[RMDB]
RNA sequence: GGGAACGACUCGAGUAGAGUCGAAAACAUGUACCCUUCGGGGUACAUGAACAUAACGCGGGCGUGGGACACCGCCGGUGCUAGCCUCAGAUAGUCCCAGUAUUAGGUGCGCCUUCGGGCGCACCAAUGAAUUGUAGAACUUCGGUUCUACAAUUCAAAAAGAAACAACAACAACAAC
Reactivity to DMS in 0.01 (KOAc 150mM, MgCl2 10mM, bicine 150mM(pH8.5), 24C), signal-to-noise 2, nucleotides 027 to 126: c010a000u000g010u000a000c000c000c000u000u010c180g050g040g010g010u000a000c000a000u000g010a080a080c070a080u010a100a110c260g000c030g030g000g020c080g000u020g010g010g000a020c030a100c040c010g000c010c090g010g050u000g010c080u010a080g000c050c030u010c190a080g000a120u000a070g010u000c010c000c000a110g000u010a100u000u020a050g020g020u000g020c000g000c020c000u010u000c170g040g020g010c000g010c000a000c000c000a000a030
Reactivity to 2A3 in 0.01 (KOAc 150mM, MgCl2 10mM, bicine 150mM(pH8.5), 24C), signal-to-noise 2, nucleotides 027 to 126: c000a000u000g000u010a000c000c000c000u000u020c210g030g000g000g000u000a000c000a000u000g010a000a000c010a070u200a080a040c080g030c010g120g010g000c130g070u070g000g000g000a000c010a000c050c000g030c000c040g030g000u050g040c070u060a030g000c030c010u080c050a010g010a280u130a070g030u010c000c000c020a000g070u070a240u170u190a030g050g000u010g000c010g000c000c040u020u120c300g080g030g000c020g000c000a010c000c000a010a000